The data come from the RNA Mapping Database (RMDB), library ARCHII. The record gives the reactivity of an RNA of 207 nucleotides to 2A3. For 2A3 the reverse transcriptase was SuperScript II with manganese.
RNA sequence: GGGAACGACUCGAGUAGAGUCGAAAAGACGUAUACGAAGGAGUGCGGUUCGUUCGAGAAAUUCCUACCUCUCUAUCUAUCUCUGAGAUGUUUGGAUUUUUCAAAACUCCAUGGACAUGCAGAAGAGAAAUGCUAUCCCCACUCGGACCAAGACAGACGUAAUGAUGGUCUUCGGACCAUCAUUACGAAAAGAAACAACAACAACAAC
Reactivity to 2A3 in 0.01 (KOAc 150mM, MgCl2 10mM, bicine 150mM(pH8.5), 24C), signal-to-noise 2, nucleotides 027 to 156: g060a010c040g080u130a060u050a110c080g100a110a080g040g030a030g070u160g110c080g060g000u010u060c030g000u050u050c040g010a020g020a070a020a010u130u080c000c000u020a030c020c020u040c010u020c020u060a040u130c050u070a070u090c140u070c050u130g000a010g000a040u040g090u030u090u020g020g020a010u030u000u000u030u040c040a090a080a000a020c020u030c030c000a010u090g040g020a050c020a030u100g000c010a060g020a170a000g060a050g040a010a050a050u040g070c010u030a030u080c000c000c000c000a020c040u020c020g050g000a030c020c010a020a020g050a020c030a050g050a020
For 2A3, 1,004 sequencing reads were counted. Conditions: 150 mM KOAc, 10 mM MgCl2 and 150 mM bicine (pH 8.5), 24 C.